Chemical mapping of a 207-nucleotide RNA with 2A3. The 2A3 profile rests on 320 reads. Conditions: 150 mM KOAc, 10 mM MgCl2 and 150 mM bicine (pH 8.5), 24 C. Reactivities are given for positions 27 through 156.

RNA sequence: GGGAACGACUCGAGUAGAGUCGAAAAAAUUCCCACAAGAUACAGAAGCGGUUUCAGAACACGUCCGUGAAUCAUUUCGAAAGCGUCCAGUUCGAACAAUUUUACACCCUUUCUCUACCCCGAUUCCACACAUGGUACAUGGUAUUCCUUGGCUUCAGCCCAUACUACGUUUCGACGUAGUAUGGGCAAAAGAAACAACAACAACAAC
Reactivity to 2A3 in 0.01 (KOAc 150mM, MgCl2 10mM, bicine 150mM(pH8.5), 24C), signal-to-noise 1, nucleotides 027 to 156: a000a000u050u020c040c000c000a020c000a000a010g010a000u190a140c000a040g060a000a000g100c040g000g160u020u110u240c080a100g010a090a010c050a000c160g000u050c000c000g180u190g090a080a030u110c120a050u040u220u190c070g000a010a110a040g050c040g020u000c000c020a120g010u080u000c010g040a050a050c070a140a050u080u000u000u080a110c040a060c000c000c000u020u190u140c020u060c040u060a060c000c000c000c000g150a200u100u060c010c010a040c000a020c000a150u120g050g000u020a020c000a060u150g000g020u000a020u010u000c000c000u000u060g070g000c010u170u250c000a020

For 2A3 the reverse transcriptase was SuperScript II with manganese. Source: RMDB library OK3TST, as collected in RNAgym.